Structure probing data (2A3 and DMS) for a 177-nucleotide construct. The data come from the RNA Mapping Database (RMDB), library OK1LIB. As a SHAPE reagent, 2A3 marks flexible, mostly unpaired nucleotides at the ribose 2'-OH. The RNA was probed in 150 mM KOAc, 10 mM MgCl2 and 150 mM bicine (pH 8.5) at 24 C.
[RMDB]
RNA sequence: GGGAACGACUCGAGUAGAGUCGAAAACCUGCGUGAGGGGUUGUAAAUGGCGCUGCGACCCACGUCUACACGCAAAUGAUGUAGAGAUUGAUCACGUAGCGUCGCGGUUGGCCCUUCCGGCCGCGGGUCAAGCUACGCGCUUCGGUGCGUGGCUUGAAAAAGAAACAACAACAACAAC
Reactivity to 2A3 in 0.01 (KOAc 150mM, MgCl2 10mM, bicine 150mM(pH8.5), 24C), signal-to-noise 8, nucleotides 027 to 126: c000c000u000g010c000g000u040g010a020g000g020g000g000u000u010g070u090a060a090a090u140g010g000c010g000c010u000g000c000g020a100c010c010c020a020c010g170u000c000u000a000c000a000c010g060c020a020a040a090u240g040a040u010g000u000a000g000a000g020a120u010u130g020a040u060c020a010c040g000u010a000g010c000g020u010c000g000c010g030g020u030u030g010g000c000c000c000u050u020c000c000g040g010c010c010g000c000g000g000g010
Reactivity to DMS in 0.01 (KOAc 150mM, MgCl2 10mM, bicine 150mM(pH8.5), 24C), signal-to-noise 9, nucleotides 027 to 126: c010c000u000g010c020g020u020g010a040g010g000g000g010u000u010g010u010a040a190a150u010g010g000c010g000c010u000g000c000g000a140c130c030c080a060c240g000u000c000u000a010c000a010c040g010c280a110a110a120u030g000a110u010g010u000a000g000a040g010a140u020u030g010a080u020c120a130c010g010u000a000g000c030g000u000c000g010c050g000g000u010u010g000g010c060c010c030u010u010c010c180g010g010c150c030g010c020g000g000g010